[RMDB]
The record gives the reactivity of an RNA of 177 nucleotides to DMS and 2A3.
RNA sequence: GGGAACGACUCGAGUAGAGUCGAAAAAACGGUAACACCAUUCACACCAUUUUCUAAAUGAUCAUAAGGACGAUCAUAACUCUUUGUAUAAGCAACAAUUGCUGGUUCUACUUCAGGUGUCGGGAAGGAGCAUGACUGAAUUCGUUCAGUCAUGCUCAAAAGAAACAACAACAACAAC
Reactivity to DMS in 0.01 (KOAc 150mM, MgCl2 10mM, bicine 150mM(pH8.5), 24C), signal-to-noise 3, nucleotides 027 to 126: a060a030c200g020g000u020a010a060c110a130c050c040a110u010u000c080a090c130a120c030c010a070u010u010u040u000c070u040a050a120a040u000g000a020u000c000a080u020a150a140g040g010a090c270g010a050u000c010a060u000a100a070c070u000c040u010u000u000g030u020a070u010a060a070g020c050a040a060c110a040a040u010u000g010c050u000g020g000u010u000c010u000a080c050u000u000c040a040g010g000u010g030u000c030g000g000g020a100a070g010
Reactivity to 2A3 in 0.01 (KOAc 150mM, MgCl2 10mM, bicine 150mM(pH8.5), 24C), signal-to-noise 2, nucleotides 027 to 126: a000a000c070g000g000u020a070a010c000a020c060c010a030u050u060c020a040c010a020c030c000a020u090u010u050u040c050u060a160a180a160u060g030a000u010c010a010u030a250a060g130g020a040c000g020a020u000c030a030u030a070a060c020u010c050u070u110u060g070u060a060u010a100a020g040c020a010a030c020a180a180u110u070g030c010u010g060g000u060u040c000u040a060c010u040u060c050a050g010g000u060g060u090c010g030g020g020a030a030g090

As a SHAPE reagent, 2A3 marks flexible, mostly unpaired nucleotides at the ribose 2'-OH. It was measured as part of the RMDB library OK2TST.